An RNA of 177 nucleotides, treated with DMS and 2A3 and read out base by base. The DMS profile rests on 2,419 reads. For 2A3, 693 sequencing reads were counted.
RNA sequence: GGGAACGACUCGAGUAGAGUCGAAAACUGCGGCGCUGAUUUGUUAUCUGAUUUACACCGCGCUGGAUUGGCAGGACAUUCAUACCGCCAUGAUCACUUGCUAUGUUGCUGCAUUGGGCACCACUGGUGAAUGUGUGAACUUCGGUUCACACAUUCAAAAAGAAACAACAACAACAAC
Reactivity to DMS in 0.01 (KOAc 150mM, MgCl2 10mM, bicine 150mM(pH8.5), 24C), signal-to-noise 3, nucleotides 027 to 126: c040u020g030c010g020g010c020g030c020u010g000a090u010u020u000g010u000u000a090u010c110u000g010a070u000u010u000a100c080a060c090c060g000c020g030c080u000g020g010a080u020u010g000g030c020a050g010g000a130c150a080u010u010c140a110u010a090c080c030g010c030c030a070u000g010a070u010c070a060c080u000u010g010c050u010a080u010g030u000u010g000c040u000g000c060a120u010u000g000g010g030c070a090c060c030a060c080u000g010g010
Reactivity to 2A3 in 0.01 (KOAc 150mM, MgCl2 10mM, bicine 150mM(pH8.5), 24C), signal-to-noise 1, nucleotides 027 to 126: c040u070g000c020g030g000c000g000c060u070g100a100u140u130u110g020u100u050a180u110c100u100g090a160u010u000u210a010c000a010c050c040g040c060g030c050u040g000g070a060u070u070g070g000c040a060g130g000a130c020a060u040u120c000a030u090a090c000c000g000c020c020a050u060g000a060u020c040a010c100u040u040g000c000u060a030u230g000u030u070g050c010u000g000c040a130u110u150g000g000g000c030a020c060c040a070c040u000g090g030